[RMDB]
An RNA of 207 nucleotides, treated with 2A3 and DMS and read out base by base. The reactions ran in a buffer of 150 mM KOAc, 10 mM MgCl2 and 150 mM bicine (pH 8.5), at 24 C. Values cover nucleotides 27 to 156. The data come from the RNA Mapping Database (RMDB), library M2RFPK. For DMS, 4,193 sequencing reads were counted.
RNA sequence: GGGAACGACUCGAGUAGAGUCGAAAAAACAAUCUUCAGGGCAGGGUGAAAUUCCCGAUCGGCGGUAAAGUCCGCGAGCCGAACGAAAAAGGUUUGGCAGGAACCGGUGAGAUUCCGGUACCGACAGCAAAGCCUCAACACUUCGGUGUUGAGGCAAUCUAAUCGUUAAGUUCGCUUAACGAUUAGAAAAAGAAACAACAACAACAAC
Reactivity to 2A3 in 0.01 (KOAc 150mM, MgCl2 10mM, bicine 150mM(pH8.5), 24C), signal-to-noise 2, nucleotides 027 to 156: a000a000c070a060a040u090c060u190u120c090a070g020g050g040c020a030g000g000g000u020g020a030a040a060u040u020c010c020c020g020a080u170c000g000g010c010g000g020u000a000a000a000g000u000c000c000g000c000g000a000g000c000c000g000a000a000c000g120a050a030a080a060a040g090g000u010u000u000g010g000c010a010g000g020a000a000c000c010g000g000u010g000a010g000a000u000u000c000c000g000g000u000a000c000c000g020a000c000a000g080c010a050a070a010g000c000c000u010c000a000a000c000a000c010u060u080c210g090g000u000g000u000u010g010a000g010g000c000a000a000
Reactivity to DMS in 0.01 (KOAc 150mM, MgCl2 10mM, bicine 150mM(pH8.5), 24C), signal-to-noise 2, nucleotides 027 to 156: a060a070c000a050a060u000c030u000u000c030a100g020g020g020c060a070g000g000g040u020g000a110a060a290u000u000c000c000c000g000a110u020c010g020g000c000g010g000u010a120a120a050g010u000c000c020g000c000g010a280g010c000c000g010a020a110c010g010a040a130a070a150a090g010g020u000u000u000g000g000c000a040g000g000a080a010c000c000g030g010u000g000a280g000a300u000u000c000c010g000g000u000a010c010c000g000a030c060a100g050c120a110a050a170g000c010c010u010c010a010a020c000a000c000u000u000c300g050g010u010g010u000u000g000a000g020g040c010a000a000